[RMDB]
RNA sequence: GGGAACGACUCGAGUAGAGUCGAAAAGUAAGGGCAUUGCCUGACGACUUUUCUGGAUGGACACUCCCUCCUAAUGGUGAAUGGAAACUCCCUUUCUCAGUAGCCUCCUUGUAGUUCAUCCCGGUAGUUACUUGCAACCUUUCGAGGUUGCAAGUAAAAAAGAAACAACAACAACAAC
Reactivity to DMS in 0.01 (KOAc 150mM, MgCl2 10mM, bicine 150mM(pH8.5), 24C), signal-to-noise 5, nucleotides 027 to 126: g010u010a080a090g000g000g030c130a110u020u020g020c010c000u000g000a220c260g010a060c030u000u000u020u020c060u020g000g000a040u010g000g000a110c140a110c160u010c020c000c010u000c010c030u010a060a060u030g000g010u020g010a080a140u010g000g000a030a070a090c150u000c020c000c010u020u000u000c020u000c030a060g010u010a150g000c040c020u000c030c030u000u000g000u030a020g010u000u020c100a110u000c010c010c050g010g010u030a060g010
Reactivity to 2A3 in 0.01 (KOAc 150mM, MgCl2 10mM, bicine 150mM(pH8.5), 24C), signal-to-noise 7, nucleotides 027 to 126: g020u040a020a060g000g000g000c120a150u060u270g080c000c020u020g000a020c070g030a030c010u040u100u110u060c070u060g040g000a040u050g040g030a020c030a020c100u110c000c000c010u010c010c010u060a080a050u120g050g000u050g110a050a050u080g030g040a020a050a030c050u060c000c000c020u010u030u000c040u010c020a040g010u050a010g010c010c000u010c000c020u030u060g040u110a030g010u040u060c030a030u020c020c010c000g030g040u080a090g030